RNA sequence: GGGAACGACUCGAGUAGAGUCGAAAAACGCUUCACAAUGUGCGGCAAAGAAACAUUGUUUAUGCAAAGGCACUCCGCAAUGUGUGCUCAAACAUUGCUUAUUCAAACACGCUUCACAAUGUGCGACAAAACUUCACGGUCUUCGGACCGUGAAGAACCAGGUAAAUCUGUUCGCAGAUUUACCUGGAAAAGAAACAACAACAACAAC
Reactivity to DMS in 0.01 (KOAc 150mM, MgCl2 10mM, bicine 150mM(pH8.5), 24C), signal-to-noise 1, nucleotides 027 to 156: a000c060g010c050u000u020c110a000c020a040a060u000g000u000g000c030g020g080c010a090a170a120g040a140a030a030c020a010u000u000g020u000u000u000a110u050g010c020a080a110a170g000g000c030a010c010u000c060c110g100c260a110a140u000g060u000g030u000g000c020u020c050a080a120a070c000a020u000u000g000c040u000u000a140u000u000c050a040a200a160c070a040c040g000c120u000u000c110a050c070a060a080u000g030u000g000c050g000a080c020a160a060a110a100c010u000u010c000a000c080g010g000u000c020u000u000c300g050g000a030c000c020g050u000g000a000a000g000a070a140
Reactivity to 2A3 in 0.01 (KOAc 150mM, MgCl2 10mM, bicine 150mM(pH8.5), 24C), signal-to-noise 5, nucleotides 027 to 156: a000c040g020c050u080u060c010a010c000a010a050u030g000u000g000c010g030g020c040a060a060a070g090a050a090a000c040a050u020u020g060u020u030u070a070u060g010c010a020a010a090g060g010c020a010c020u040c030c050g090c140a090a090u150g020u010g040u010g020c020u050c070a080a110a020c030a060u020u020g010c030u100u080a050u100u140c070a030a070a020c050a010c130g030c020u060u070c040a010c030a060a180u100g000u030g030c020g100a060c070a020a090a060a060c000u000u000c000a000c000g010g000u000c000u020u050c080g100g000a000c000c000g000u000g000a000a000g000a000a000